The record gives the reactivity of an RNA of 177 nucleotides to DMS and 2A3. 2A3 adducts were read by reverse transcription with SuperScript II with manganese.

RNA sequence: GGGAACGACUCGAGUAGAGUCGAAAACCGGGGUGGACGGACCUCCGGUGAACCGGUUGUCGACCAACGGCAUGGCCGGGUAGCCGCGUCCGGCGCGGAUAACCGCUGAAGGCAUCUAAGCGGGAAGCUUUUUUACUAUAUUCGUAUAGUAAAAAAGAAAAGAAACAACAACAACAAC
Reactivity to DMS in 0.01 (KOAc 150mM, MgCl2 10mM, bicine 150mM(pH8.5), 24C), signal-to-noise 9, nucleotides 027 to 126: c000c000g000g000g010g020u010g000g010a090c010g010g000a070c020c010u010c050c000g020g000u000g000a130a300c010c010g000g000u000u000g010u010c010g010a180c230c280a110a160c040g010g000c010a050u070g010g010c010c000g020g000g000u030a300g000c010c010g000c080g000u000c010c010g000g000c040g000c070g000g000a100u010a080a150c000c000g010c010u000g010a130a130g010g010c110a040u020c020u010a150a040g000c000g000g000g010a090a110g000
Reactivity to 2A3 in 0.01 (KOAc 150mM, MgCl2 10mM, bicine 150mM(pH8.5), 24C), signal-to-noise 8, nucleotides 027 to 126: c000c000g000g010g010g060u080g030g050a070c010g010g000a010c000c010u060c020c010g000g020u050g020a060a020c000c000g000g020u060u020g010u000c020g020a210c080c060a210a130c030g010g010c020a040u090g140g000c000c000g000g010g020u030a010g000c000c000g010c030g010u000c000c000g010g020c020g000c010g020g020a050u080a130a070c000c000g000c000u010g040a110a040g100g010c030a050u050c050u060a040a010g000c000g010g020g020a020a010g010